[RMDB]
RNA sequence: GGGAACGACUCGAGUAGAGUCGAAAAGAAAAACGCCAAAAAGCAUUUAAAGUAUGCGGUCUAGGCGGCCAUGUUACCAUGCAAAGUUAUCGACAAUAACUUAGACCAAGUACGAAAGUACAAAAAAGUUAAGAAUAGGCUUCGGCCUAUUCUUAACAAAAGAAACAACAACAACAAC
Reactivity to 2A3 in 0.01 (KOAc 150mM, MgCl2 10mM, bicine 150mM(pH8.5), 24C), signal-to-noise 1, nucleotides 027 to 126: g070a040a130a020a000a000c030g000c000c000a000a010a000a030a000g040c020a020u040u060u300a090a100a070g080u070a040u020g000c000g000g030u010c020u030a080g020g010c000g000g000c000c010a030u030g000u010u150a090c090c030a000u020g050c040a120a000a030g010u020u030a050u110c190g140a020c060a020a050u000a000a000c000u030u000a000g010a000c010c000a120a050g000u000a010c000g040a020a020a010g000u030a000c010a000a080a000a080a030a080
Reactivity to DMS in 0.01 (KOAc 150mM, MgCl2 10mM, bicine 150mM(pH8.5), 24C), signal-to-noise 2, nucleotides 027 to 126: g030a060a030a070a070a100c030g020c000c030a030a060a010a020a060g070c010a000u040u000u000a120a070a230g010u000a000u020g010c030g000g000u000c020u000a070g030g000c010g010g030c300c050a020u000g000u000u010a170c200c040a010u010g000c010a030a010a010g020u000u000a010u000c090g040a130c300a120a120u000a000a000c010u000u000a020g020a050c010c020a030a070g000u000a010c000g010a080a030a050g000u010a010c000a000a070a070a050a080a030